[RMDB]
RNA sequence: GGGAACGACUCGAGUAGAGUCGAAAAAUACCACUACUCUCAAUGUUGUUUUACUUAUACCAUGAUGUAGCAUCUGUGUGGCCUCGCGGUCGCUCAGUUCUAGUUGUAAACUUGGGCUUUUGCCUGGUACUACUGUCCCAUUCGUGGGACAGUAGUAAAAAGAAACAACAACAACAAC
Reactivity to 2A3 in 0.01 (KOAc 150mM, MgCl2 10mM, bicine 150mM(pH8.5), 24C), signal-to-noise 3, nucleotides 027 to 126: a010u160a070c040c030a030c030u100a070c000u080c010u050c140a120a180u110g010u000u000g000u000u060u000u050a070c030u070u080a060u030a080c030c030a120u140g020a060u120g150u090a010g060c100a070u020c000u020g000u020g000u010g010g000c040c000u050c080g050c120g020g000u020c010g010c010u020c040a020g000u020u040c050u030a030g020u040u050g120u090a090a110a020c030u070u110g000g000g000c000u040u100u120u300g010c000c040u020g020g050
Reactivity to DMS in 0.01 (KOAc 150mM, MgCl2 10mM, bicine 150mM(pH8.5), 24C), signal-to-noise 3, nucleotides 027 to 126: a060u010a080c080c050a110c090u000a040c040u000c040u000c090a100a110u020g020u010u000g000u010u000u000u010a100c080u010u010a100u030a080c090c080a050u020g000a050u040g000u000a010g010c150a050u020c010u000g000u000g030u020g010g020c030c010u010c280g010c200g000g010u000c000g000c010u010c020a040g000u000u010c040u010a100g000u000u000g030u010a040a070a050c080u010u020g020g000g010c010u010u000u010u000g020c000c000u000g000g020